[RMDB]
The record gives the reactivity of an RNA of 207 nucleotides to 2A3 and DMS.
For 2A3, 1,958 sequencing reads were counted.
Values are in units of 0.01, from 0 to 300, in steps of 10.
The DMS profile rests on 4,625 reads.
Conditions: 150 mM KOAc, 10 mM MgCl2 and 150 mM bicine (pH 8.5), 24 C.
RNA sequence: GGGAACGACUCGAGUAGAGUCGAAAAGUUGCAGGGAUCUUUGAAGGAGCGACAGGAGCUCAAGUUGAGUGCUGCAUUUCGGCUUCAUUGCAUCUCGGUGAGCACACAGUGGGCGAUAGAGGUCUGCUGUGAACGGAUGGCAAGGGGAAAGGACAUAAAUUAGGCAUGGAUUCGUCCAUGCCUAAUUAAAAGAAACAACAACAACAAC
Reactivity to 2A3 in 0.01 (KOAc 150mM, MgCl2 10mM, bicine 150mM(pH8.5), 24C), signal-to-noise 3, nucleotides 027 to 156: g070u050u090g010c030a030g000g010g020a030u000c020u030u090u070g040a080a020g050g020a100g050c030g030a030c020a050g040g060a060g020c000u020c070a110a120g090u190u230g040a020g000u040g050c010u020g030c050a080u060u090u080c030g090g000c020u050u050c030a060u000u090g030c030a070u040c040u010c000g010g060u040g070a020g040c020a020c000a000c000a070g030u050g000g000g000c020g040a070u110a120g130a040g050g120u020c020u020g000c000u000g020u000g010a030a010c030g040g010a020u030g010g000c030a050a030g000g010g000g010a070a060a000g030g010a020c010a080u120a070
Reactivity to DMS in 0.01 (KOAc 150mM, MgCl2 10mM, bicine 150mM(pH8.5), 24C), signal-to-noise 2, nucleotides 027 to 156: g000u010u000g020c020a110g000g020g010a060u000c010u000u010u000g020a110a090g020g000a140g030c040g020a150c090a120g020g010a140g020c030u010c030a060a130g030u000u000g000a070g070u000g010c000u000g010c030a120u000u010u000c010g040g000c020u000u010c040a060u010u010g030c070a070u000c010u010c020g040g050u010g000a140g020c060a260c020a040c060a020g000u000g000g040g030c020g000a190u000a150g010a150g060g010u000c020u000g000c010u000g010u000g000a060a060c060g000g000a110u000g020g000c090a040a070g030g000g000g030a060a080a080g010g010a100c070a070u000a020